[RMDB]
RNA sequence: GGGAACGACUCGAGUAGAGUCGAAAAGAUCAGACACGCCGACCACACGGCCCAAGGGAAAUUGCAUUUGCCUUUCAAGCUGAUCCCGAGUACCUGCAUGGUCCCUGUUGCCCACGCGCCGAACGUAAACAGUCAUUGCUUUCGAGCAAUGACUGUUAAAAGAAACAACAACAACAAC
Reactivity to DMS in 0.01 (KOAc 150mM, MgCl2 10mM, bicine 150mM(pH8.5), 24C), signal-to-noise 2, nucleotides 027 to 126: g000a100u000c040a070g000a070c070a120c070g020c010c040g020a080c050c020a060c130a130c070g030g020c060c070c040a070a060g000g020g000a040a060a040u000u010g020c020a300u010u020u000g020c000c010u000u000u000c120a110a140g010c030u000g020a150u000c000c030c000g040a050g000u000a030c060c020u000g030c060a090u000g010g000u020c030c000c000u000g000u000u000g020c020c000c010a110c160g040c060g010c040c030g000a080a130c180g000u030a060
This 177-nucleotide RNA was probed chemically with DMS. The RNA was probed in 150 mM KOAc, 10 mM MgCl2 and 150 mM bicine (pH 8.5) at 24 C. For DMS the reverse transcriptase was MarathonRT.